[RMDB]
RNA sequence: GGGAACGACUCGAGUAGAGUCGAAAAUAAGGCUGUGGGCCCGAGAGAAGUCGCUCUCUCUCGCCCUGUACGUCCUCUCAGGCAUAGAGAUGACCAUUUGCCUAGGGUGAGUCUUUAAGUAGACACAGCCUAUCUAUGGUGACGUAUUGGGGCACGGGGCAUAUAACACGUUCGCGUGUUAUAUGCCAAAAGAAACAACAACAACAAC
Reactivity to 2A3 in 0.01 (KOAc 150mM, MgCl2 10mM, bicine 150mM(pH8.5), 24C), signal-to-noise 3, nucleotides 027 to 156: u210a020a000g060g000c030u020g060u150g100g120g000c000c000c030g010a020g000a020g010a220a040g040u080c020g020c030u010c000u000c000u000c010u010c020g000c000c010c000u000g000u000a000c010g000u010c010c000u000c010u030c130a000g000g000c000a020u100a050g040a010g050a140u190g090a070c080c110a290u050u090u040g000c010c010u000a010g000g000g030u000g000a020g010u010c000u020u150u080a300a300g300u140a040g050a010c020a000c000a000g000c000c000u000a030u110c020u000a010u030g000g010u010g010a010c000g020u020a020u090u300g000g000g000g000c020a020c020g040g000
An RNA of 207 nucleotides, treated with 2A3 and read out base by base.
Reactivities are given for positions 27 through 156.
For 2A3 the reverse transcriptase was SuperScript II with manganese.
The RNA was probed in 150 mM KOAc, 10 mM MgCl2 and 150 mM bicine (pH 8.5) at 24 C.